The record gives the reactivity of an RNA of 207 nucleotides to DMS and 2A3. The reactions ran in a buffer of 150 mM KOAc, 10 mM MgCl2 and 150 mM bicine (pH 8.5), at 24 C. The 2A3 profile rests on 2,050 reads. 2A3 adducts were read by reverse transcription with SuperScript II with manganese. The data come from the RNA Mapping Database (RMDB), library M2RFPK.
RNA sequence: GGGAACGACUCGAGUAGAGUCGAAAACAGAACUGGAUGGGCCGUGUGCUUAACCAGGACAAGAUCUCCUUCUCUCCAACGUUGUUGACAACUCAUGAUUCUCCUAACCUGUGCUUGGAGAGACGUGCUACCAUAUAGGUGUUCGCACCUAUAUGAAGUGUUUAAAAGGAUUCGUCCUUUUAAACACAAAAGAAACAACAACAACAAC
Reactivity to DMS in 0.01 (KOAc 150mM, MgCl2 10mM, bicine 150mM(pH8.5), 24C), signal-to-noise 2, nucleotides 027 to 156: c050a090g010a080a210c010u000g010g000a150u000g010g020g060c010c060g050u030g000u000g010c000u000u000a030a120c010c010a040g010g000a160c060a120a100g010a130u010c030u020c010c030u020u000c010u000c030u000c010c010a020a090c100g000u000u000g000u000u000g000a180c100a090a100c040u030c040a050u040g000a130u000u000c040u010c040c040u010a070a070c020c070u000g010u030g020c070u000u000g010g010a020g010a030g000a050c070g030u010g020c060u000a140c120c000a010u000a010u000a000g060g050u000g010u010u000c300g050c000a050c040c000u000a000u020a000u000g010a030a130
Reactivity to 2A3 in 0.01 (KOAc 150mM, MgCl2 10mM, bicine 150mM(pH8.5), 24C), signal-to-noise 3, nucleotides 027 to 156: c050a030g070a070a010c000u030g000g020a050u040g040g020g030c020c050g300u250g060u280g130c010u050u040a070a080c000c000a010g000g050a010c060a050a110g030a100u040c010u010c050c000u070u000c010u000c010u000c030c020a020a070c080g010u020u030g000u050u030g000a070c060a090a060c050u030c080a060u050g090a240u190u040c050u090c030c040u070a060a060c010c090u110g030u070g150c040u040u040g000g000a010g010a000g000a020c010g020u050g020c030u050a170c060c010a000u000a010u000a000g020g010u000g030u030u010c180g010c050a000c000c000u000a010u000a000u000g010a010a040